[RMDB]
Structure probing data (2A3 and DMS) for a 207-nucleotide construct. For DMS the reverse transcriptase was MarathonRT. Values cover nucleotides 27 to 156. The 2A3 profile rests on 10,448 reads. For 2A3 the reverse transcriptase was SuperScript II with manganese. The data come from the RNA Mapping Database (RMDB), library M2RFPK.
RNA sequence: GGGAACGACUCGAGUAGAGUCGAAAAGUAUGGAUGCAACCGUGACGGCUCAAUCACACAAGUGCCAACGAUAACGAGGCGCUCGCUAUUGCUGCGUAACUGACGGCCUGACGGUCUGACGUUACAAAAAACGAAAAGUGGUUCGCCACUUUUCGAAGAUACACUAACUCUUCGGAGUUAGUGUAUCAAAAGAAACAACAACAACAAC
Reactivity to 2A3 in 0.01 (KOAc 150mM, MgCl2 10mM, bicine 150mM(pH8.5), 24C), signal-to-noise 8, nucleotides 027 to 156: g110u090a070u150g040g050a030u060g030c020a000a050c050c030g040u050g040a060c050g030g020c000u030c050a060a090u110c020a060c020a020c020a120a070g030u020g070c030c030a080a050c070g060a100u090a180a060c080g010a040g070g020c040g010c050u030c020g000c030u060a070u140u150g030c040u070g030c030g020u010a010a020c000u020g030a010c010g000g020c000c010u140g110a070c120g010g010u000c010u010g010a010c010g000u010u010a020c010a000a060a000a020a010a010c010g000a000a000a000a000g000u000g010g030u030u050c140g050c050c000a000c000u000u000u000u000c000g000a020a010
Reactivity to DMS in 0.01 (KOAc 150mM, MgCl2 10mM, bicine 150mM(pH8.5), 24C), signal-to-noise 3, nucleotides 027 to 156: g030u010a050u000g010g000a110u000g010c050a090a060c040c000g000u010g010a140c080g000g000c020u000c070a110a070u010c050a080c070a100c050a060a090g070u000g020c030c000a050a140c070g030a100u000a100a090c050g000a210g040g010c030g040c020u000c030g060c020u000a040u000u040g000c000u000g000c060g010u000a020a060c020u000g000a300c300g000g020c010c000u020g020a130c230g020g030u000c020u030g000a300c250g020u010u000a020c050a010a020a030a070a110a130c000g010a010a010a020a010g010u010g000g020u000u010c300g000c060c000a010c000u020u000u000u000c030g010a020a070
For DMS, 5,371 sequencing reads were counted.